[RMDB]
Notes
An RNA of 177 nucleotides, treated with DMS and read out base by base. Source: RMDB library M2PK90, as collected in RNAgym.
RNA sequence: GGGAACGACUCGAGUAGAGUCGAAAAGACAAAUGCAGCAUAUUAGGCUAAGCUGGAAAGGGACGGUAGCUCCUGGUGUCAGUUCAUACGGUGUGAUGCAUCUGCGUCGUGCACACAUGCACCCAAACGACCUGUUCGAUUUCGAUCGAACAGGUCGAAAAGAAACAACAACAACAAC
Reactivity to DMS in 0.01 (KOAc 150mM, MgCl2 10mM, bicine 150mM(pH8.5), 24C), signal-to-noise 1, nucleotides 027 to 126: g000a090c070a050a070a060u000g030c060a030g020c050a050u010a030u000u010a080g050g000c160u000a040a080g010c010u030g000g000a110a080a160g000g020g020a050c090g000g000u000a070g020c100u000c000c030u000g000g000u010g000u000c000a060g010u000u010c030a080u000a130c120g010g000u000g030u000g000a140u000g000c010a020u050c070u000g010c160g020u010c020g040u000g030c010a060c130a010c110a030u000g030c020a120c010c010c040a050a030a220